This 207-nucleotide RNA was probed chemically with 2A3 and DMS. 2A3 adducts were read by reverse transcription with SuperScript II with manganese. The reactions ran in a buffer of 150 mM KOAc, 10 mM MgCl2 and 150 mM bicine (pH 8.5), at 24 C. For DMS the reverse transcriptase was MarathonRT.
[RMDB]
RNA sequence: GGGAACGACUCGAGUAGAGUCGAAAACGCUGGGAAUAGUUAAGACAGUCUCACGCGAGAAUGGAGUCGACUGAAGCGCGCACGGUCGACGAUGAAAUUCUCGAGACAAUGACGACUAUUCCUGUGCUGAAGCGCGCACGGCAACCGAAAGGUGCGAGACAACUUGUAUCUUCGGAUACAAGUUGUCAAAAGAAACAACAACAACAAC
Reactivity to 2A3 in 0.01 (KOAc 150mM, MgCl2 10mM, bicine 150mM(pH8.5), 24C), signal-to-noise 5, nucleotides 027 to 156: c020g000c010u010g000g000g010a010a000u010a010g020u050u120a230a080g260a180c080a060g040u000c040u020c090a170c120g120c050g010a010g000a010a000u010g000g020a010g000u000c000g000a000c000u020g020a260a070g030c000g000c010g000c000a030c010g000g010u000c000g000a000c000g010a050u010g000a000a010a000u000u000c010u000c010g010a000g010a020c160a100a220u190g020a010c040g000a000c000u000a000u000u000c000c010u000g000u000g000c000u020g020a120a040g000c010g000c000g000c000a010c000g000g010c000a010a010c000c000g030a070a040a030g020g000u010g020c020g010a050
Reactivity to DMS in 0.01 (KOAc 150mM, MgCl2 10mM, bicine 150mM(pH8.5), 24C), signal-to-noise 1, nucleotides 027 to 156: c120g010c040u020g010g010g010a020a000u000a010g020u000u000a110a150g060a290c080a120g000u000c020u020c040a260c200g020c020g020a000g000a020a020u000g000g020a150g000u000c010g000a030c000u000g000a030a130g030c020g060c020g010c070a300c010g020g000u000c000g010a050c020g010a120u000g020a100a110a030u000u000c020u000c080g020a080g070a060c130a130a190u010g000a030c010g000a100c010u000a040u020u000c000c000u000g080u000g010c090u020g010a160a060g000c100g050c000g000c000a230c020g000g010c030a150a200c000c000g010a100a250a100g050g000u000g050c030g040a200